[RMDB]
Record summary: Conditions: 150 mM KOAc, 10 mM MgCl2 and 150 mM bicine (pH 8.5), 24 C. Structure probing data (DMS and 2A3) for a 207-nucleotide construct. Reactivities are rounded to 0.1 and cut off at 0 and 3. The 2A3 profile rests on 8,584 reads. Values cover nucleotides 27 to 156.
RNA sequence: GGGAACGACUCGAGUAGAGUCGAAAAGAAAGAAAGAAAGAAAGGUAUGAAGUCCUAUUCACGCGUGAUAGGAUAAACUUCAUAUUGAUCGUGUAUGUGCUAACGCACAUACACGAAUGCGCAUGCAGAACUGCAUGCAUGAACAUAACGUGUGCAAGACGCUCAUAAUAUUCGUAUUAUGAGCGUCAAAAGAAACAACAACAACAAC
Reactivity to DMS in 0.01 (KOAc 150mM, MgCl2 10mM, bicine 150mM(pH8.5), 24C), signal-to-noise 3, nucleotides 027 to 156: g010a130a070a090g030a160a060a090g000a120a090a120g000a070a180a190g010g000u000a020u000g020a030a010g020u020c010c010u000a010u000u000c030a130c160g000c120g010u020g010a040u000a000g000g000a080u010a040a100a070c020u000u010c010a030u000a010u000u000g010a110u010c000g060u010g000u000a000u000g020u000g020c000u010a090a190c300g020c000a030c000a010u000a010c000a010c000g010a010a020u000g020c050g020c020a020u000g000c020a040g000a110a090c170u000g080c030a090u000g020c000a020u010g000a070a070c040a080u000a060a040c050g020u000g010u000g000c090a140a270
Reactivity to 2A3 in 0.01 (KOAc 150mM, MgCl2 10mM, bicine 150mM(pH8.5), 24C), signal-to-noise 6, nucleotides 027 to 156: g050a010a080a010g080a050a050a020g090a040a090a000g100a060a080a020g030g000u010a010u010g000a010a000g020u020c000c000u010a010u000u040c070a010c050g030c010g010u020g010a000u000a000g010g010a020u090a040a100a010c010u000u000c010a010u020a010u030u060g040a050u020c000g000u000g000u000a010u010g030u000g000c070u140a140a040c160g000c010a000c000a000u000a000c010a000c010g000a010a010u030g010c030g000c000a000u000g000c000a000g050a300a090c230u060g000c010a010u010g000c000a010u120g040a020a010c050a060u180a100a010c020g010u020g020u040g060c040a070a050
DMS adducts were read by reverse transcription with MarathonRT.